RNA sequence: GGGAACGACUCGAGUAGAGUCGAAAAUCUUGUGUCGCUCCGGUAACCGCUCCAUCGGCGCGGCCGAGGUCGCGACCGAGGCGGGCAUCACGCCGGCCUAUAACGUGCUGGACGGCUUCGAAGGGCAGUUAAGUCAGGCAUUCGUGCCUGACUUAACAAAAGAAACAACAACAACAAC
Reactivity to 2A3 in 0.01 (KOAc 150mM, MgCl2 10mM, bicine 150mM(pH8.5), 24C), signal-to-noise 2, nucleotides 027 to 126: u020c020u030u110g070u030g060u070c020g010c050u000c000c020g050g010u060a120a080c000c020g010c020u050c070c030a140u060c010g000g000c000g020c000g000g000c000c020g000a130g000g070u030c030g000c030g240a300c000c000g000a010g020g020c060g000g000g000c050a110u190c020a020c090g030c010c010g090g000c020c020u180a190u070a060a090c060g050u080g000c010u000g000g090a050c000g000g000c000u020u030c070g020a060a100g020g020g030c060a060
Reactivity to DMS in 0.01 (KOAc 150mM, MgCl2 10mM, bicine 150mM(pH8.5), 24C), signal-to-noise 1, nucleotides 027 to 126: u030c000u000u040g000u110g000u040c020g000c140u000c000c000g020g040u000a110a190c020c030g000c010u000c130c170a060u030c000g000g000c020g000c020g010g000c000c060g000a080g080g010u000c040g000c000g000a150c010c000g020a030g000g020c000g000g040g000c100a090u000c170a230c100g060c000c040g000g020c090c000u000a070u020a270a190c150g050u000g000c000u000g000g010a140c000g000g060c000u020u020c120g000a230a110g000g050g000c120a170